[RMDB]
RNA sequence: GGGAACGACUCGAGUAGAGUCGAAAAAUGCCCAGGUCGGACCGCGAGGAGGUGGAGAUGCCAUGCCGACCCGAAGAGGAAAGAAGGACGCGAGACGGGAACUCGUGAGUGAAAACCCGCUUUAUUCGUAUUUAGAGAUGUUCGCAUCUCUAAAUACAAAAGAAACAACAACAACAAC
Reactivity to 2A3 in 0.01 (KOAc 150mM, MgCl2 10mM, bicine 150mM(pH8.5), 24C), signal-to-noise 3, nucleotides 027 to 126: a000u110g030c010c000c000a000g000g030u040c020g000g030a040c040c010g010c050g030a070g050g030a050g010g020u070g010g040a100g000a050u120g030c000c010a050u110g030c000c010g030a040c000c000c020g040a060a010g050a020g010g030a070a030a050g020a040a030g030g000a000c020g010c010g050a050g010a040c040g010g030g010a070a030c010u000c040g010u050g070a080g010u130g060a040a030a030a040c030c000c000g010c010u090u130u120a240u100u140c080
Reactivity to DMS in 0.01 (KOAc 150mM, MgCl2 10mM, bicine 150mM(pH8.5), 24C), signal-to-noise 4, nucleotides 027 to 126: a070u000g000c020c010c010a160g010g010u000c030g010g000a140c090c060g020c060g010a070g020g020a070g000g030u000g010g010a090g010a100u010g010c040c040a050u010g000c040c020g000a070c040c010c060g000a060a060g000a080g000g000a050a070a070g010a070a050g000g010a080c110g010c060g000a040g010a080c040g000g010g000a090a090c050u000c030g000u000g010a090g010u020g000a070a030a100a190c010c000c000g000c210u010u010u010a120u000u000c180